The record gives the reactivity of an RNA of 177 nucleotides to 2A3 and DMS. The DMS profile rests on 1,434 reads. The reactions ran in a buffer of 150 mM KOAc, 10 mM MgCl2 and 150 mM bicine (pH 8.5), at 24 C.

RNA sequence: GGGAACGACUCGAGUAGAGUCGAAAAUUAAAAUUUGAGGCAUGAAGUGGAAGGGUAGUCGGCAGGGUCAAGGUCGGGAAGAAUGAGGACUCUAAACCAACCAAGCUUAUGAGUGGAAUACAAAAAACCAAUACGAUUUGUUCGCAAAUCGUAUUGGAAAAGAAACAACAACAACAAC
Reactivity to 2A3 in 0.01 (KOAc 150mM, MgCl2 10mM, bicine 150mM(pH8.5), 24C), signal-to-noise 2, nucleotides 027 to 126: u090u040a110a010a050a090u080u070u080g030a000g010g060c090a050u070g010a150a010g020u010g090g030a120a100g000g020g010u060a010g050u050c040g030g040c040a000g080g000g000u060c050a000a020g020g000u060c070g000g010g000a060a030g050a090a050u150g020a060g000g030a040c000u000c010u060a090a030a020c000c000a010a000c020c010a040a050g060c030u200u140a060u200g030a020g090u100g000g070a080a020u200a130c080a010a150a000a000a000a020
Reactivity to DMS in 0.01 (KOAc 150mM, MgCl2 10mM, bicine 150mM(pH8.5), 24C), signal-to-noise 2, nucleotides 027 to 126: u000u020a040a060a100a110u000u020u000g000a050g000g000c050a070u000g000a070a060g010u000g010g020a080a090g030g000g010u000a030g010u000c040g010g000c080a040g020g000g030u000c080a060a090g000g010u020c050g000g020g010a060a040g000a060a050u010g010a100g000g010a050c070u000c050u000a040a080a120c030c020a050a070c090c050a070a090g010c060u000u000a020u010g010a060g010u010g000g000a030a040u020a030c090a010a040a090a060a080a040